The data come from the RNA Mapping Database (RMDB), library RNAMAK. An RNA of 207 nucleotides, treated with DMS and 2A3 and read out base by base. Reactivities are rounded to 0.1 and cut off at 0 and 3. For DMS, 16,231 sequencing reads were counted.
RNA sequence: GGGAACGACUCGAGUAGAGUCGAAAAUCAUUGAGAUUCGUCUCAAUGAAAAGCGUACUACACGGGAGACGGGUGACUACCCACCCUAUCCCAAAUAGGAUAGGAGGUCAUUGUCUUUGAUCGUGUAUCGCAAAAGGUAAAUCGUUCGCGAUUUACCCGUACUUUCUAAGUUCGCUUAGAAAGUACGAAAAGAAACAACAACAACAAC
Reactivity to DMS in 0.01 (KOAc 150mM, MgCl2 10mM, bicine 150mM(pH8.5), 24C), signal-to-noise 4, nucleotides 027 to 156: u000c010a000u000u000g000a010g010a040u000u000c300g010u000c010u000c000a010a010u000g010a020a050a070a140g020c020g030u010a090c080u000a020c010a030c020g000g000g000a070g000a020c010g020g040g030u010g010a050c010u000a080c040c010c040a300c160c000c000u000a030u000c000c010c010a020a090a110u010a060g000g010a030u000a010g020g000a280g000g000u000c010a030u000u000g020u000c010u000u000u010g010a150u000c010g040u010g000u000a030u010c010g030c020a060a040a100a080g010g000u000a010a010a010u000c000g020u000u010c300g040c040g000a020u000u000u000a000c000c000
Reactivity to 2A3 in 0.01 (KOAc 150mM, MgCl2 10mM, bicine 150mM(pH8.5), 24C), signal-to-noise 9, nucleotides 027 to 156: u030c000a000u000u010g000a010g000a010u030u150c230g080u020c100u000c000a000a000u000g010a020a020a010a030g010c010g020u080a080c050u010a000c030a000c010g060g050g010a010g000a010c080g100g030g040u010g000a000c010u100a170c040c040c020a040c010c000c000u000a000u000c000c000c010a020a050a060u130a020g000g000a000u000a000g000g010a020g020g000u000c010a010u030u070g030u010c000u080u130u100g150a240u170c010g000u010g010u010a040u300c010g000c020a050a050a030a030g000g000u000a000a000a000u010c020g030u080u090c280g030c010g120a000u000u000u000a000c000c000